[RMDB]
RNA sequence: GGGAACGACUCGAGUAGAGUCGAAAAAGGUCAGUGGCCCAUUUGCAGACUGCGACAGCCAUCACAGACCAAGGUAUCGUGCCACGGCAUGUUCCACCUUGGCCAUUUGGUCACGGUCCAGAUAGAAGUCUUCUGACUGCUUCGGCGGUCAGAAGGCAAAAGAAACAACAACAACAAC
Reactivity to DMS in 0.01 (KOAc 150mM, MgCl2 10mM, bicine 150mM(pH8.5), 24C), signal-to-noise 7, nucleotides 027 to 126: a080g000g010u010c040a050g020u010g000g010c020c020c070a090u020u010u000g000c100a130g000a100c060u010g000c060g010a060c140a110g000c070c060a060u000c090a090c180a080g010a100c020c000a040a030g010g010u000a030u020c040g010u000g000c010c010a130c300g030g000c010a010u010g000u020u020c130c130a040c010c010u000u000g000g000c080c010a080u000u000u010g010g020u010c010a050c050g010g010u010c010c030a070g010a120u050a060g000a060a120
Reactivity to 2A3 in 0.01 (KOAc 150mM, MgCl2 10mM, bicine 150mM(pH8.5), 24C), signal-to-noise 5, nucleotides 027 to 126: a000g030g010u030c020a000g010u020g020g000c000c000c010a020u020u010u070g020c020a010g010a060c020u030g000c010g030a030c030a020g030c010c000a020u030c010a040c030a030g030a020c000c000a010a000g000g000u010a000u040c010g000u020g000c000c010a040c100g040g000c000a000u010g020u060u010c040c010a010c000c000u000u000g000g000c010c010a040u040u020u080g010g000u030c010a000c030g010g010u010c000c000a010g020a030u070a020g080a080a010